[RMDB]
RNA sequence: GGGAACGACUCGAGUAGAGUCGAAAAACCUUUGUGUCCUCAGUACGCACAUUGUCAGUCCAAAAAGGAGUCCCAUUGGGACUCUACAAAGGACUUGGAUUUAUGUGCGGAACCGGACACUCUGGUAAAGUCCAUUCGGUUUCGACCGAAUGGACAAGAAGUGAAAGAAGUUCGCUUCUUUCACUUCAAAAGAAACAACAACAACAAC
Reactivity to 2A3 in 0.01 (KOAc 150mM, MgCl2 10mM, bicine 150mM(pH8.5), 24C), signal-to-noise 3, nucleotides 027 to 156: a000c000c000u010u010u000g000u000g000u010c000c000u000c000a000g010u000a000c000g000c000a000c000a000u000u020g010u020c010a000g000u000c010c030a050a050a040a070a110g050g000a000g010u000c000c010c040a150u180u240g000g000g000a000c000u000c000u030a020c070a020a140a050g010g000a000c010u020u080g020g000a030u280u300u010a000u030g000u000g000c000g000g000a000a000c000c000g000g000a000c000a000c000u000c000u000g000g020u080a240a100a040g000u000c000c000a000u010u000c000g000g050u040u090u140c250g090a040c000c020g000a000a000u000g010g000a000c000a000a010
Reactivity to DMS in 0.01 (KOAc 150mM, MgCl2 10mM, bicine 150mM(pH8.5), 24C), signal-to-noise 1, nucleotides 027 to 156: a050c000c000u000u000u000g050u000g000u010c000c010u000c030a100g040u000a190c020g020c000a050c000a000u000u000g000u000c050a000g010u010c000c000a060a110a130a180a270g000g000a050g040u030c010c010c040a300u000u040g020g060g000a010c000u000c000u000a000c040a200a140a300g020g010a030c040u000u020g000g020a040u000u000u000a040u000g010u000g080c000g000g000a160a010c260c300g050g000a030c000a000c000u000c040u030g030g000u000a070a090a160g000u020c000c000a050u000u000c010g010g000u000u000u010c300g010a080c000c040g000a030a040u000g010g020a000c010a010a070
Conditions: 150 mM KOAc, 10 mM MgCl2 and 150 mM bicine (pH 8.5), 24 C. This 207-nucleotide RNA was probed chemically with 2A3 and DMS. For 2A3 the reverse transcriptase was SuperScript II with manganese. For DMS the reverse transcriptase was MarathonRT.